An RNA of 207 nucleotides, treated with 2A3 and read out base by base. The reactions ran in a buffer of 150 mM KOAc, 10 mM MgCl2 and 150 mM bicine (pH 8.5), at 24 C. The 2A3 profile rests on 2,133 reads. It was measured as part of the RMDB library VIROID.
[RMDB]
RNA sequence: GGGAACGACUCGAGUAGAGUCGAAAAGGCCUCUUCCUAGGUCCGGAGUCUACCUCCAUCUGGUCCGUCCGGGCCCUCUUCGCCGGGGGAGCCCCCUCUCCAUCCUUAUCCUUCUUUCCGAGAAUUCCUUUGACGUUUCCCAGCCAGGGAUUAUCGUAGUUACAAAGUAGUUCGCUACUUUGUAACUAAAAGAAACAACAACAACAAC
Reactivity to 2A3 in 0.01 (KOAc 150mM, MgCl2 10mM, bicine 150mM(pH8.5), 24C), signal-to-noise 2, nucleotides 027 to 156: g030g010c040c000u030c020u080u030c010c010u040a040g030g020u000c020c020g020g010a010g030u040c060u120a070c020c030u050c070c030a140u070c120u120g020g000u000c040c060g100u030c020c010g030g000g000c000c000c010u030c080u150u180c070g060c060c020g000g000g000g010g020a020g010c000c000c000c020c010u000c010u000c000c020a090u050c000c030u110u120a120u130c030c000u020u080c010u060u110u000c050c020g030a020g030a150a080u020u070c030c000u130u070u120g040a060c020g040u010u030u030c000c000c000a030g010c020c020a000g000g020g020a030u010u080a090u100c030g010u000